An RNA of 177 nucleotides, treated with 2A3 and DMS and read out base by base. Values are in units of 0.01, from 0 to 300, in steps of 10. The data come from the RNA Mapping Database (RMDB), library OK2TST.
RNA sequence: GGGAACGACUCGAGUAGAGUCGAAAAUUUGACAGCUAAUACCAUAGUGAAUGUUCUUGAGAAAGUCGGUAUAAGCCAUACGGCGGUUGAUUUGGUCACAUUAUUUACCUUGAUGAACAUCGAAGUACCGCAUACUGAUAUUCGUAUCAGUAUGCGGAAAAGAAACAACAACAACAAC
Reactivity to 2A3 in 0.01 (KOAc 150mM, MgCl2 10mM, bicine 150mM(pH8.5), 24C), signal-to-noise 2, nucleotides 027 to 126: u110u090u200g100a090c090a010g000c000u010a010a020u020a050c010c000a050u020a010g030u050g060a020a020u070g000u040u010c020u010u090g040a090g090a110a110a030g050u050c050g030g030u120a120u050a170a000g040c010c010a020u070a140c090g040g040c050g020g010u030u050g000a070u020u070u160g020g040u030c000a020c010a050u030u140a130u080u210u140a060c000c000u060u020g010a040u020g020a040a020c000a030u060c020g040a080a000g070u110a030
Reactivity to DMS in 0.01 (KOAc 150mM, MgCl2 10mM, bicine 150mM(pH8.5), 24C), signal-to-noise 2, nucleotides 027 to 126: u000u010u000g030a090c100a190g010c030u020a020a050u000a140c010c020a090u000a060g020u000g010a120a040u020g000u000u000c040u030u010g000a150g000a090a080a100g010u000c060g000g000u020a070u000a070a100g000c050c060a130u000a050c100g030g010c040g010g000u000u000g020a070u000u010u000g010g000u020c080a050c060a050u010u010a110u000u000u000a070c050c020u000u000g010a050u010g010a010a070c090a030u000c020g020a050a110g010u020a080